RNA sequence: GGGAACGACUCGAGUAGAGUCGAAAAACACAAUUUUCAUGAAAUCUUACUUUUUCAAAGACAAUGUUUUCUUUGAUCUAAUGGAUCGAUGGAACACCAAACAUAGCUCAAACUACAGAGACAGCAUGGGAAGGAAGCUAGAGGGCAAAAUUGUGACAUAGAACGACAGAUUCGUCUGUCGUUCUAUAAAAGAAACAACAACAACAAC
Reactivity to DMS in 0.01 (KOAc 150mM, MgCl2 10mM, bicine 150mM(pH8.5), 24C), signal-to-noise 1, nucleotides 027 to 156: a050c010a060c040a050a100u000u020u000u010c050a190u010g000a040a070a080u020c040u010u020a120c020u000u010u010u000u000c040a070a080a100g000a100c100a040a050u000g010u020u000u000u000c020u000u000u010g020a020u010c040u010a040a090u010g040g000a060u000c040g020a080u000g000g000a050a010c100a010c030c020a040a060a080c080a060u000a080g000c070u010c120a040a120a090c020u000a070c060a040g010a140g030a100c140a000g000c020a050u000g070g000g000a070a100g020g000a020a060g040c060u010a030g000a060g010g020g000c030a020a050a010a080u000u000g020u000g020a100c110
Reactivity to 2A3 in 0.01 (KOAc 150mM, MgCl2 10mM, bicine 150mM(pH8.5), 24C), signal-to-noise 3, nucleotides 027 to 156: a000c050a010c050a110a130u130u130u120u130c080a070u130g080a160a110a060u050c050u070u100a140c030u140u130u080u060u210c100a110a060a030g040a030c030a030a040u040g030u030u080u030u050c000u080u050u110g000a000u000c000u070a160a090u080g010g000a010u040c030g030a030u040g000g020a030a030c050a020c080c010a010a010a010c070a070u080a030g020c000u030c080a020a070a150c050u120a060c120a090g040a010g020a070c020a000g040c010a010u040g030g010g020a000a020g020g000a020a000g000c000u010a000g010a000g020g010g000c010a000a000a000a100u030u050g000u010g030a010c020